The record gives the reactivity of an RNA of 207 nucleotides to 2A3.
[RMDB]
RNA sequence: GGGAACGACUCGAGUAGAGUCGAAAAAGUGUUCUCAGUUCGCUGAGAACACUACAAGAACCUUUGUGACGAAUUGAUGACCCACUGGUCCCAUUGGGACCUGUGGCAAGAAACGUCACUCUGGUAUAUUACCUCCCCCUCUUCGGAGGGGGAGGAAGUUACAUUCGGCGUUCGCGCCGAAUGUAACAAAAGAAACAACAACAACAAC
Reactivity to 2A3 in 0.01 (KOAc 150mM, MgCl2 10mM, bicine 150mM(pH8.5), 24C), signal-to-noise 1, nucleotides 027 to 156: a020g010u000g000u000u000c000u000c000a020g070u080u130c300g000c130u010g000a010g000a010a000c000a010c000u020a030c020a030a030g070a080a090c000c020u000u010u010g020u030g000a020c010g040a150a120u030u070g020a040u080g050a230c000c000c010a010c020u050g000g000u000c000c000c130a300u270u300g000g000g000a000c000c000u000g040u000g000g010c000a000a080g010a020a020a000c010g000u000c000a010c000u010c000u020g000g090u080a060u050a070u300u200a150c040c000u020c070c000c000c000c000u020c000u040u030c220g120g010a000g000g020g000g000g000a010g000g000a000a000
The 2A3 profile rests on 617 reads. For 2A3 the reverse transcriptase was SuperScript II with manganese.